[RMDB]
RNA sequence: GGGAACGACUCGAGUAGAGUCGAAAAACACGGACUUCGGUCCGUGUAAAAUCCUAAGUCUCCUAAGACAGGUAUGUGGAGCUGCGUGUCGGAAACGACACCAGCGUUGAAACAUACUCGAGGAGAUAUGGAAAACAACUACGUUUCGACGUAGUUGGAAAUAGGACAGGUUCGCCUGUCCUAUUUCAAAAGAAACAACAACAACAAC
Reactivity to 2A3 in 0.01 (KOAc 150mM, MgCl2 10mM, bicine 150mM(pH8.5), 24C), signal-to-noise 3, nucleotides 027 to 156: a000c000a000c000g020g010a010c010u050u050c150g140g000u000c000c000g010u020g000u000a000a000a000a010u010c000c000u010a120a030g020u000c000u020c000c020u120a200a110g130a130c110a090g050g040u000a000u000g010u010g010g010a020g000c010u030g000c100g040u000g000u000c000g000g050a070a050a070c020g010a000c010a010c000c000a000g000c000g010u060u020g010a010a000a000c000a000u010a010c020u040c030g050a000g000g010a000g000a000u030a050u020g040g030a020a090a030a050c010a000a000c000u000a010c000g020u030u070u180c250g070a040c000g000u000a000g000u000u000g000
Reactivity to DMS in 0.01 (KOAc 150mM, MgCl2 10mM, bicine 150mM(pH8.5), 24C), signal-to-noise 3, nucleotides 027 to 156: a070c010a000c000g010g010a030c000u000u010c300g050g000u000c000c000g050u010g010u000a010a050a130a140u000c000c000u000a030a210g020u000c000u000c020c000u000a120a090g020a160c300a050g000g010u000a000u010g020u000g010g020a270g020c010u000g010c200g020u000g020u000c000g000g010a110a110a270c010g020a000c010a000c010c000a000g010c000g000u010u000g020a240a200a030c010a020u000a010c000u010c020g000a020g000g000a030g010a060u000a080u000g010g020a090a080a120a270c010a010a010c000u000a000c000g030u010u000u010c240g000a110c000g010u000a000g000u000u010g010